[RMDB]
RNA sequence: GGGAACGACUCGAGUAGAGUCGAAAAGAAGAGAAAGGAGACACAGGGACAGUCUCCAGAGGUUCCUAAGGCCUCGAUCGCGCCUGCCGGGAAUCAUGGACCCCCGGUUGUCCAUGAGAGAAGAAGACGUCGUACGCUAGUUCGCUAGCGUACGACGAAAAGAAACAACAACAACAAC
Reactivity to 2A3 in 0.01 (KOAc 150mM, MgCl2 10mM, bicine 150mM(pH8.5), 24C), signal-to-noise 1, nucleotides 027 to 126: g070a050a060g070a000g040a050a080a100g100g000a040g070a020c120a010c070a200g000g000g160a000c000a080g070u010c010u000c000c010a000g000a000g000g010u000u010c000c000u140a020a130g000g060c020c010u080c040g030a030u180c070g000c060g010c010c000u000g020c000c000g000g000g040a000a070u040c010a090u000g000g000a020c000c020c100c040c000g120g020u120u070g010u030c050c000a000u100g020a030g000a000g000a210a000g060a100a060g250a020

Annotation
The data come from the RNA Mapping Database (RMDB), library OK1LIB. Chemical mapping of a 177-nucleotide RNA with 2A3. The RNA was probed in 150 mM KOAc, 10 mM MgCl2 and 150 mM bicine (pH 8.5) at 24 C.